[RMDB]
RNA sequence: GGGAACGACUCGAGUAGAGUCGAAAAGAAAUUCCUGAUGUAAUUCUUCGUGAAACUCAUGAUUGAAUCUUUAGAAGUACUCCUGAUGGAACUUUUGGAGUAAAUUUUGAUGAGGUUGCUGGUGGAACGGUAUUAUAGGUUUCGACCUAUAAUACCGAAAAGAAACAACAACAACAAC
Reactivity to 2A3 in 0.01 (KOAc 150mM, MgCl2 10mM, bicine 150mM(pH8.5), 24C), signal-to-noise 2, nucleotides 027 to 126: g050a000a140a010u060u050c000c020u050g040a090u100g070u020a070a200u100u090c020u100u070c080g110u040g190a090a090a080c030u020c020a000u030g090a040u080u050g040a080a110u000c020u020u060u020a050g020a060a010g000u030a090c010u000c030c060u190g100a200u190g110g050a170a200c020u120u070u050u000g020g020a020g030u020a040a030a120u090u070u010u160g090a030u030g000a010g110g010u050u050g010c060u080g020g030u060g000g060a030a090
Reactivity to DMS in 0.01 (KOAc 150mM, MgCl2 10mM, bicine 150mM(pH8.5), 24C), signal-to-noise 2, nucleotides 027 to 126: g010a120a210a300u010u000c010c000u000g050a130u000g020u000a070a130u010u010c020u000u010c100g010u000g020a080a050a110c070u000c030a010u010g010a040u000u010g010a190a110u010c010u000u000u000a050g000a020a020g020u000a060c230u000c010c010u000g000a210u000g000g020a060a040c000u010u000u000u000g010g010a000g000u000a050a040a100u010u000u010u000g020a040u010g010a040g000g000u010u000g000c020u000g020g020u000g010g000a050a120
Notes
This 177-nucleotide RNA was probed chemically with 2A3 and DMS. Reactivities are rounded to 0.1 and cut off at 0 and 3. For DMS, 1,596 sequencing reads were counted.